[RMDB]
RNA sequence: GGGAACGACUCGAGUAGAGUCGAAAAAAUAGGAGAACGUAAUUCUAAGAUACGAGUAUACUGCUUAGAUGAACGUACUGAGGAAGUAUUGAAGAAUUUGCUUCGUUCGCCGGACGUAUGCGAUAUACAAUGACAUCACCUUCGGGUGAUGUCAUUGAAAAGAAACAACAACAACAAC
Reactivity to DMS in 0.01 (KOAc 150mM, MgCl2 10mM, bicine 150mM(pH8.5), 24C), signal-to-noise 2, nucleotides 027 to 126: a080a050u020a100g030g020a040g000a040a040c030g000u000a050a080u000u000c000u010a030a300g010a010u000a010c060g000a110g040u000a020u000a130c210u000g000c040u010u010a070g020a100u020g010a140a050c090g010u000a010c050u000g010a100g020g010a120a090g020u000a010u020u000g010a160a060g040a040a030u000u000u000g030c090u010u000c030g010u000u000c000g000c030c050g000g010a120c120g000u000a020u010g020c100g020a110u000a090u010a150
Reactivity to 2A3 in 0.01 (KOAc 150mM, MgCl2 10mM, bicine 150mM(pH8.5), 24C), signal-to-noise 1, nucleotides 027 to 126: a000a000u140a050g010g000a010g010a050a020c000g000u030a020a020u000u000c010u010a000a000g000a020u040a070c020g010a040g060u080a050u040a160c090u090g060c000u050u000a030g030a100u140g010a050a010c030g000u020a030c030u030g070a050g190g080a070a030g050u050a020u060u130g070a040a020g070a050a070u010u070u100g040c020u040u060c010g040u010u000c030g000c060c020g030g010a010c010g030u060a010u260g060c030g020a000u000a010u000a090

Annotation
An RNA of 177 nucleotides, treated with DMS and 2A3 and read out base by base. It was measured as part of the RMDB library OK2TST. The RNA was probed in 150 mM KOAc, 10 mM MgCl2 and 150 mM bicine (pH 8.5) at 24 C.